Notes: An RNA of 177 nucleotides, treated with DMS and 2A3 and read out base by base. DMS adducts were read by reverse transcription with MarathonRT. It was measured as part of the RMDB library OK2TRN. The RNA was probed in 150 mM KOAc, 10 mM MgCl2 and 150 mM bicine (pH 8.5) at 24 C.
RNA sequence: GGGAACGACUCGAGUAGAGUCGAAAAUAAAUGAAGCGCAGGGAUGCACUUUCAGUGAAGUAAACCUGGUCAGGUUGGUUCAAUUUGAUAACCCUGUUAUGAGCGACAUAAAUCAAUUUGUCGUAGCUGCAGACUAUAGAUUCGUCUAUAGUCUGCAAAAAGAAACAACAACAACAAC
Reactivity to DMS in 0.01 (KOAc 150mM, MgCl2 10mM, bicine 150mM(pH8.5), 24C), signal-to-noise 4, nucleotides 027 to 126: u030a070a130a110u000g010a110a070g030c060g020c010a000g010g010g010a160u000g000c160a080c120u000u000u000c020a030g010u010g000a020a020g000u010a080a030a030c010c010u000g020g010u020c170a040g010g000u000u010g000g010u000u000c040a030a080u010u000u000g000a060u000a080a110c010c000c010u010g010u000u010a050u010g000a210g010c000g000a010c000a010u000a060a070a110u020c300a060a050u010u000u000g020u000c010g010u000a090g030c150
Reactivity to 2A3 in 0.01 (KOAc 150mM, MgCl2 10mM, bicine 150mM(pH8.5), 24C), signal-to-noise 2, nucleotides 027 to 126: u090a000a130a110u140g080a110a030g030c040g020c050a020g040g000g040a070u180g080c080a050c070u040u090u100c030a030g000u010g030a000a010g050u030a080a050a000c010c020u050g060g300u210c180a000g000g000u010u010g010g030u020u010c040a090a090u150u110u160g040a050u030a030a030c010c000c000u030g060u060u090a140u170g140a080g070c000g020a000c000a020u090a050a140a110u160c080a050a070u020u010u020g000u000c010g000u020a020g050c070